[RMDB]
RNA sequence: GGGAACGACUCGAGUAGAGUCGAAAACGGGGUCGGUGAAAGUCCGAACCGGCGGUUACAGUCCGCGACCCGGUCGCCUCCAGCUACCGGUUGACCAGGUGAAAUUCCUGGACCGACGGUUAAAGUCAAAAUCAUCCAACGUUCGCGUUGGAUGAAAGUAUACGUACUUGUUCGCAAGUACGUAUACAAAAGAAACAACAACAACAAC
Reactivity to 2A3 in 0.01 (KOAc 150mM, MgCl2 10mM, bicine 150mM(pH8.5), 24C), signal-to-noise 1, nucleotides 027 to 156: c030g020g000g010g030u020c010g010g000u010g020a040a000a030g030u000c010c000g010a030a030c010c010g020g000c020g000g000u000u020a000c000a010g000u000c010c000g010c010g030a020c000c010c010g000g010u000c030g000c010c030u180c090c030a030g010c000u010a000c000c000g000g040u000u040g000a000c000c010a000g000g010u010g000a000a010a000u020u010c020c000u000g000g000a000c000c000g000a000c000g000g020u030u100a110a020a010g030u050c060a010a010a000a230u030c000a000u010c000c000a000a000c000g020u060u060c180g020c000g080u010u000g000g000a000u000g000a000a000a010
Reactivity to DMS in 0.01 (KOAc 150mM, MgCl2 10mM, bicine 150mM(pH8.5), 24C), signal-to-noise 2, nucleotides 027 to 156: c040g000g020g020g030u000c010g030g020u010g000a100a090a300g020u010c020c000g000a050a180c040c010g000g000c020g010g020u000u010a160c150a170g000u000c000c010g000c010g010a230c300c010c000g030g050u000c090g010c070c000u000c120c090a190g010c010u000a070c000c020g000g030u000u000g000a030c000c000a040g000g060u000g000a030a300a120u000u000c010c000u020g000g000a030c010c010g010a080c060g040g010u010u000a030a140a120g010u000c060a040a110a110a160u000c000a000u000c000c000a020a010c010g010u000u000c300g060c060g080u000u020g020g020a020u010g000a000a030a100